[RMDB]
RNA sequence: GGGAACGACUCGAGUAGAGUCGAAAAGAAGGAGAGUAGAUGAUUCGCGUUAAGUGUGUGUGAAUGGCAUGUCGUCACACAACGAAGCGAGAGCGCGGUGAAUCAUUGCAUGCGCUCCAAAACAAAACACUAGCGUCUAGUUCGCUAGACGCUAGUGAAAAGAAACAACAACAACAAC
Reactivity to DMS in 0.01 (KOAc 150mM, MgCl2 10mM, bicine 150mM(pH8.5), 24C), signal-to-noise 2, nucleotides 027 to 126: g020a150a210g000g000a010g000a040g010u000a300g000a000u000g000a000u000u000c000g020c000g040u000u070a040a040g000u010g010u000g000u010g000u000g000a030a020u030g020g000c040a010u000g000u040c240g000u000c000a010c000a010c010a020a030c070g010a110a060g030c000g000a150g010a140g030c020g020c090g010g020u000g020a010a010u000c050a020u000u000g010c120a010u000g020c010g000c000u000c000c000a030a040a180a090c190a060a040a090a110
Reactivity to 2A3 in 0.01 (KOAc 150mM, MgCl2 10mM, bicine 150mM(pH8.5), 24C), signal-to-noise 3, nucleotides 027 to 126: g160a070a070g000g000a010g010a000g010u020a000g000a010u010g000a000u000u000c000g000c010g010u020u060a020a020g000u020g000u000g000u010g000u000g030a090a040u020g010g000c010a000u020g050u100c070g020u000c020a000c000a000c000a010a020c030g010a030a000g020c010g030a040g020a010g030c000g000c000g020g040u010g000a000a010u000c000a000u000u010g000c000a000u000g000c000g000c010u020c000c000a020a050a000a020c050a000a040a010a010

Source: RMDB library OK1LIB, as collected in RNAgym. Chemical mapping of a 177-nucleotide RNA with DMS and 2A3. High DMS reactivity at an A or C suggests that its Watson-Crick edge is free. 2A3 is a SHAPE reagent: it acylates the 2'-hydroxyl of flexible nucleotides of all four kinds. Values cover nucleotides 27 to 126. The reactions ran in a buffer of 150 mM KOAc, 10 mM MgCl2 and 150 mM bicine (pH 8.5), at 24 C.